Annotation: The record gives the reactivity of an RNA of 207 nucleotides to DMS and 2A3.
[RMDB]
RNA sequence: GGGAACGACUCGAGUAGAGUCGAAAAGUAGGGUGGUGCAAGCUGCCUACAUGGAUCAGCUCCAUCAAUAAGCAAGAGAUGACGAUGAGAGCAGUGCAAAAGGACCAACCAGGACAGCAUUGUCAGAAAGUAUAGGUGGAACUUCAGAGAAUCAAAACGGCUUUAUCUAAUUCGUUAGAUAAAGCCGAAAAGAAACAACAACAACAAC
Reactivity to DMS in 0.01 (KOAc 150mM, MgCl2 10mM, bicine 150mM(pH8.5), 24C), signal-to-noise 1, nucleotides 027 to 156: g030u000a050g010g050g020u020g040g000u010g000c180a010a130g030c010u000g040c030c000u010a060c160a160u000g010g000a080u000c070a140g060c060u000c040c020a070u000c010a040a160u000a090a130g010c030a130a110g010a180g000a130u000g000a090c120g020a080u000g000a300g030a090g000c000a020g040u000g030c050a070a000a100a020g000g010a170c000c090a080a090c060c040a100g020g000a080c010a130g000c070a000u000u000g020u030c020a120g000a050a060a090g010u000a130u000a040g010g030u000g070g000a080a090c030u000u000c050a040g000a270g000a120a090u000c070a010a030a100a090
Reactivity to 2A3 in 0.01 (KOAc 150mM, MgCl2 10mM, bicine 150mM(pH8.5), 24C), signal-to-noise 3, nucleotides 027 to 156: g080u060a070g030g030g030u060g040g020u040g000c010a030a040g020c010u000g000c010c010u010a060c040a070u080g090g000a110u080c020a010g010c010u010c020c020a010u010c010a040a140u160a180a070g030c060a160a020g040a020g020a100u100g030a050c080g020a020u030g070a050g000a000g100c030a030g020u050g030c020a040a070a030a070g030g020a020c020c000a020a050c030c020a010g040g010a000c010a040g000c030a080u030u060g010u030c000a020g080a050a080a010g080u110a050u030a130g030g010u020g010g030a020a010c010u050u050c040a010g030a010g000a130a060u150c110a110a000a000a040

Notes:
The DMS profile rests on 1,228 reads.